[RMDB]
RNA sequence: GGGAACGACUCGAGUAGAGUCGAAAAUACCAAUGGUUCGCCAUUGGUACUUGUAUUGACGAAUACUACCGUAGAAGUAUUGAGGUCUCAUAACUACGGAUAUACACUAGAGUUUCGACUCUAGUAAUAUCAUACGAAGGUUCGCCUUCGUAUGAUAAAAAGAAACAACAACAACAAC
Reactivity to DMS in 0.01 (KOAc 150mM, MgCl2 10mM, bicine 150mM(pH8.5), 24C), signal-to-noise 7, nucleotides 027 to 126: u000a010c000c010a000a000u000g000g010u000u010c230g030c010c000a010u010u000g010g010u000a000c060u000u010g010u000a170u010u010g010a120c150g000a050a020u000a010c010u000a120c000c000g000u000a010g000a150a050g010u000a030u010u000g010a100g010g010u000c040u010c000a080u010a100a120c000u000a010c010g000g000a300u020a070u010a110c200a050c000u000a010g000a020g010u000u000u010c180g000a020c000u000c000u000a000g010u000a030a080
Reactivity to 2A3 in 0.01 (KOAc 150mM, MgCl2 10mM, bicine 150mM(pH8.5), 24C), signal-to-noise 7, nucleotides 027 to 126: u030a010c010c000a000a000u010g000g030u030u040c220g050c070c000a010u000u000g020g000u000a020c020u060u100g100u090a180u070u200g130a070c070g080a030a000u010a030c010u040a210c010c020g010u000a000g010a230a000g050u030a040u040u100g040a070g060g100u030c030u000c050a080u080a140a060c010u010a000c010g000g020a030u050a010u020a100c070a000c020u010a000g000a010g000u040u090u100c180g090a020c000u000c010u000a000g000u010a000a000
The record gives the reactivity of an RNA of 177 nucleotides to DMS and 2A3. The DMS profile rests on 8,366 reads. The RNA was probed in 150 mM KOAc, 10 mM MgCl2 and 150 mM bicine (pH 8.5) at 24 C. For 2A3 the reverse transcriptase was SuperScript II with manganese. The data come from the RNA Mapping Database (RMDB), library M2PK50.